[RMDB]
RNA sequence: GGGAACGACUCGAGUAGAGUCGAAAAGAUAUGGACAGGCGAUGCCGAAGAACAGCUUCGGAAACGAAGCUGGGAGGAACUACAUCAGCCUGUCCUAAGUCAAAACCGGUACCUUCGGGUACCGGAAGUCGAAUCAUAUCUUCGGAUAUGAUUCGACAAAAGAAACAACAACAACAAC
Reactivity to DMS in 0.01 (KOAc 150mM, MgCl2 10mM, bicine 150mM(pH8.5), 24C), signal-to-noise 2, nucleotides 027 to 126: g000a050u010a230u000g040g000a010c010a000g000g040c010g020a010u000g000c000c100g000a130a130g000a250a240c000a000g000c010u000u000c010g020g000a050a090a140c020g010a020a000g020c010u000g010g010g000a150g010g030a140a110c080u010a180c000a000u000c020a150g020c000c000u010g000u000c000c000u010a030a050g000u020c030a050a060a130a100c020c000g040g010u000a020c000c010u000u010c270g070g000g000u000a000c000c000g010g010a000a050
Reactivity to 2A3 in 0.01 (KOAc 150mM, MgCl2 10mM, bicine 150mM(pH8.5), 24C), signal-to-noise 2, nucleotides 027 to 126: g010a000u040a030u090g000g000a000c000a010g010g020c020g000a010u030g100c070c150g200a220a030g040a020a000c000a010g000c000u000u000c000g000g000a060a050a020c000g000a000a020g000c000u010g010g000g000a020g030g060a110a130c210u220a030c300a020u000c040a070g030c000c000u000g010u000c000c000u000a000a000g000u010c000a000a000a080a130c000c000g000g000u000a000c000c000u070u120c300g120g000g000u000a010c000c000g020g010a010a010
Structure probing data (DMS and 2A3) for a 177-nucleotide construct.
Reactivities are given for positions 27 through 126.
The 2A3 profile rests on 3,714 reads.
2A3 adducts were read by reverse transcription with SuperScript II with manganese.
For DMS the reverse transcriptase was MarathonRT.
For DMS, 1,360 sequencing reads were counted.
The data come from the RNA Mapping Database (RMDB), library TTRDEL.
Conditions: 150 mM KOAc, 10 mM MgCl2 and 150 mM bicine (pH 8.5), 24 C.